[RMDB]
RNA sequence: GGGAACGACUCGAGUAGAGUCGAAAAGUAUGGCUGCCUGGUAUCUACGAAGAACUGUAGAAAAACAUGGAUGAUACGCAGAGAAGCGGACAAACGCCUUCCAUGGAUCAGCUGACAUUGCAGUGCGAGCUCUAGGGAACUUCGGUUCCCUAGAGCUAAAAGAAACAACAACAACAAC
Reactivity to 2A3 in 0.01 (KOAc 150mM, MgCl2 10mM, bicine 150mM(pH8.5), 24C), signal-to-noise 2, nucleotides 027 to 126: g120u100a020u090g060g000c000u000g000c000c000u000g020g000u010a010u030c000u060a000c000g090a080a220g130a240a000c110u180g000u000a000g000a000a110a000a000a000c000a000u010g000g010a000u000g050a040u140a110c000g000c000a000g040a000g000a000a000g000c040g090g100a040c140a080a000a000c020g000c000c000u020u000c000c000a000u010g000g000a030u050c000a000g010c000u040g000a040c010a080u000u110g000c160a010g080u020g150c000g000
Reactivity to DMS in 0.01 (KOAc 150mM, MgCl2 10mM, bicine 150mM(pH8.5), 24C), signal-to-noise 1, nucleotides 027 to 126: g000u040a020u000g000g040c000u000g010c070c000u010g010g040u000a000u000c000u000a000c020g010a160a150g000a150a080c080u110g000u000a020g000a000a070a000a010a000c020a010u000g000g000a020u000g010a090u000a080c000g000c000a010g000a070g000a000a020g010c000g000g000a100c180a000a010a010c000g000c000c010u000u000c000c000a000u020g000g050a030u000c010a000g030c080u000g000a040c020a010u000u030g080c080a050g020u020g020c180g010